The record gives the reactivity of an RNA of 170 nucleotides to DMS and 2A3. For DMS the reverse transcriptase was MarathonRT. 2A3 adducts were read by reverse transcription with SuperScript II with manganese. Reactivities are given for positions 27 through 129. The reactions ran in a buffer of 150 mM KOAc, 10 mM MgCl2 and 150 mM bicine (pH 8.5), at 24 C.
[RMDB]
RNA sequence: GGGAACGACUCGAGUAGAGUCGAAAAGACUGUCCCUCUCGAGAAUCGGCAAAUGGGGCCCCUCGCUCGUAUCUCCGAGAGGAGACGAGAAGGAGGUGGAUCUCCCUUUGCCAUCCGAGGGGAUUGCGAACUCCCCGCUUCGGCGGGGAGAAAAGAAACAACAACAACAAC
Reactivity to DMS in 0.01 (KOAc 150mM, MgCl2 10mM, bicine 150mM(pH8.5), 24C), signal-to-noise 1, nucleotides 027 to 129: g030a120c000u000g010u000c040c000c000u090c030u020c040g050a120g030a040a040u070c140g000g060c020a000a040a010u050g000g000g050g030c010c000c000c000u000c010g000c000u000c010g000u080a120u030c030u010c000c000g010a200g000a270g010g010a020g030a050c060g020a000g010a060a130g050g050a030g050g070u130g020g070a090u040c030u040c050c010c000u060u000u000g000c010c010a000u040c010c000g020a000g000g010g020g030a010u060u040g010c090g070a110a050
Reactivity to 2A3 in 0.01 (KOAc 150mM, MgCl2 10mM, bicine 150mM(pH8.5), 24C), signal-to-noise 5, nucleotides 027 to 129: g050a040c030u030g020u000c020c050c020u110c010u000c010g300a300g020a120a100u160c080g000g000c000a000a020a060u150g000g000g000g010c020c020c000c000u000c000g000c000u000c000g040u110a210u010c000u000c000c010g050a060g010a050g040g000a000g000a000c000g010a000g000a020a140g180g010a000g010g030u300g010g000a030u050c050u030c040c010c000u000u000u000g000c000c000a000u010c000c000g000a020g000g000g000g000a000u040u120g050c010g010a080a060